The record gives the reactivity of an RNA of 177 nucleotides to DMS and 2A3. High DMS reactivity at an A or C suggests that its Watson-Crick edge is free.
RNA sequence: GGGAACGACUCGAGUAGAGUCGAAAACGUUACGUGAUGACGGAAUAUCAGGCCAGUGAACGGCGCGGGUGCCGGAUUAUGGGUAUCAGUCGAAGUUUGCUGCAUUAUUGUCCUAACACCGCGAGGGACUCACUUUACGCUUCGGCGUAAAGUGAGUAAAAGAAACAACAACAACAAC
Reactivity to DMS in 0.01 (KOAc 150mM, MgCl2 10mM, bicine 150mM(pH8.5), 24C), signal-to-noise 2, nucleotides 027 to 126: c060g010u000u000a070c020g020u010g010a110u010g000a120c080g010g010a090a060u020a070u010c100a100g020g000c120c020a050g020u000g010a060a040c040g010g030c060g020c040g020g010g010u000g000c010c010g010g030a190u000u010a130u020g010g010g010u010a010u000c030a050g020u000c020g010a070a060g010u000u000u000g010c000u000g020c070a100u010u010a070u020u000g000u010c010c010u000a080a110c090a090c050c000g000c140g000a130g010g010g000
Reactivity to 2A3 in 0.01 (KOAc 150mM, MgCl2 10mM, bicine 150mM(pH8.5), 24C), signal-to-noise 1, nucleotides 027 to 126: c020g000u000u050a000c030g060u050g050a170u000g060a030c020g030g060a180a070u030a010u140c060a000g100g110c070c010a010g000u000g050a060a000c010g020g040c010g000c050g070g000g010u020g030c000c050g090g010a120u190u140a110u300g110g010g000u010a010u070c000a010g130u150c010g010a050a020g000u000u000u060g010c010u000g000c030a000u110u070a100u050u150g050u000c020c010u030a040a010c090a040c030c020g040c040g010a080g010g040g000